[RMDB]
RNA sequence: GGGAACGACUCGAGUAGAGUCGAAAAGUGCUUGAGCACUGUCGUUGCGGGAUGUCGAUCCGGAAAGACAUACGAGAGUUCGAUCCGAUCCGGAAAGCAUUUGCUCUCUUUGUGCUCUUGCACGAAAGGGACUGCCGAGCUUCGGCUUGGUAGUCCCAAAAGAAACAACAACAACAAC
Reactivity to DMS in 0.01 (KOAc 150mM, MgCl2 10mM, bicine 150mM(pH8.5), 24C), signal-to-noise 7, nucleotides 027 to 126: g020u000g010c000u000u010g020a040g010c000a020c000u000g000u010c090g010u020u000g000c070g000g000g000a020u020g020u040c130g000a160u020c010c000g000g000a030a190a110g000a020c040a070u000a060c130g000a100g000a100g010u010u010c090g000a140u000c040c010g000a180u030c060c040g010g000a010a090a230g000c300a050u010u030u020g010c010u010c020u000c040u000u020u000g010u000g010c000u000c030u000u010g000c010a000c000g000a040a080a090
Reactivity to 2A3 in 0.01 (KOAc 150mM, MgCl2 10mM, bicine 150mM(pH8.5), 24C), signal-to-noise 9, nucleotides 027 to 126: g000u000g000c000u010u010g000a000g000c000a000c010u020g050u080c100g060u050u090g110c020g020g030g010a030u030g090u300c040g020a050u020c010c000g000g010a030a040a000g020a010c030a040u170a050c040g010a020g010a020g140u110u140c110g030a120u000c040c020g020a150u050c030c020g000g000a020a020a010g000c020a030u030u030u170g040c000u000c000u010c000u120u180u100g000u000g000c000u000c000u000u000g000c000a000c000g000a040a000a010
An RNA of 177 nucleotides, treated with DMS and 2A3 and read out base by base. 2A3 adducts were read by reverse transcription with SuperScript II with manganese.